[RMDB]
Chemical mapping of a 207-nucleotide RNA with 2A3 and DMS.
High DMS reactivity at an A or C suggests that its Watson-Crick edge is free.
The reactions ran in a buffer of 150 mM KOAc, 10 mM MgCl2 and 150 mM bicine (pH 8.5), at 24 C.
2A3 adducts were read by reverse transcription with SuperScript II with manganese.
It was measured as part of the RMDB library OK3TST.
DMS adducts were read by reverse transcription with MarathonRT.
RNA sequence: GGGAACGACUCGAGUAGAGUCGAAAACGUGAUUGAUGCCAUGUUGGAGCGGAUGAAGCACGAGAAGACGGUGGACAUCUAUGGCCACGUGACCUGCAUGCGAUCACAGAGGAACUACAUGGUGCAGACGGAGGACCAGUACGUGUUCAUCCAUGAGACCAGUGCAGAUAUUCGUAUCUGCACUGGUAAAAGAAACAACAACAACAAC
Reactivity to 2A3 in 0.01 (KOAc 150mM, MgCl2 10mM, bicine 150mM(pH8.5), 24C), signal-to-noise 4, nucleotides 027 to 156: c050g050u060g050a100u010u060g010a010u090g040c000c030a050u050g030u040u060g040g040a090g040c050g000g020a020u020g000a040a030g060c020a010c030g090a080g040a130a040g100a000c110g040g040u030g030g010a030c010a060u010c080u110a150u140g050g000c010c010a020c020g020u050g070a070c020c000u030g000c020a030u110g080c070g020a040u110c030a000c010a080g080a080g030g080a030a040c010u090a050c050a070u140g040g000u020g000c010a020g020a030c040g020g000a050g100g020a080c000c000a050g040u100a050c050g000u000g020u040u000c020a060u000c010c000a030u100g060a070g050
Reactivity to DMS in 0.01 (KOAc 150mM, MgCl2 10mM, bicine 150mM(pH8.5), 24C), signal-to-noise 2, nucleotides 027 to 156: c070g030u000g010a130u000u020g030a110u000g000c030c040a060u010g040u000u010g020g010a190g060c110g020g000a080u000g010a070a110g030c040a030c030g000a090g020a040a090g050a070c110g020g070u000g030g000a090c030a060u000c080u000a160u010g000g020c020c000a060c030g000u010g000a040c050c040u010g030c020a090u000g000c000g020a050u000c020a110c030a110g030a150g020g000a020a090c070u000a100c030a020u000g000g000u000g000c070a090g000a090c090g040g000a080g030g040a110c080c010a090g020u010a110c060g010u010g000u000u000c010a020u000c020c030a150u000g000a230g020